[RMDB]
RNA sequence: GGGAACGACUCGAGUAGAGUCGAAAACACAUGCCAUCAUAUCGGUUAAGAACUCUUAACUCUGAUGGCUUUCGAGUUAAGUGGUGCAUUGAAGCUCUCCCUUCAAUUCAACGUACCGUUCCGUCAACACAUGCAUCAAUUUCGAUUGAUGCAUGUGAAAAGAAACAACAACAACAAC
Reactivity to DMS in 0.01 (KOAc 150mM, MgCl2 10mM, bicine 150mM(pH8.5), 24C), signal-to-noise 7, nucleotides 027 to 126: c140a070c200a070u010g010c000c000a010u010c010a040u010a120u010c290g000g010u000u000a010a010g000a220a180c300u000c000u000u000a000a010c000u000c100u000g010a010u000g010g000c020u000u000u000c050g000a030g020u000u010a050a100g010u010g020g010u000g010c020a040u000u000g000a020a030g000c080u000c080u000c080c050c010u000u000c090a060a080u000u000c030a030a040c060g010u010a020c020c000g010u000u000c000c010g000u000c070a070a160
Reactivity to 2A3 in 0.01 (KOAc 150mM, MgCl2 10mM, bicine 150mM(pH8.5), 24C), signal-to-noise 5, nucleotides 027 to 126: c060a010c000a060u130g000c030c000a000u010c000a010u100a050u210c080g040g010u020u020a020a010g080a290a210c060u010c000u300u000a000a000c010u010c020u100g000a000u010g020g000c000u000u010u010c000g020a000g000u020u110a250a070g070u080g190g020u030g000c010a030u000u040g010a020a020g030c040u030c050u100c120c010c060u020u040c040a040a040u040u030c020a050a040c040g040u030a020c040c000g000u010u020c010c010g110u060c020a050a060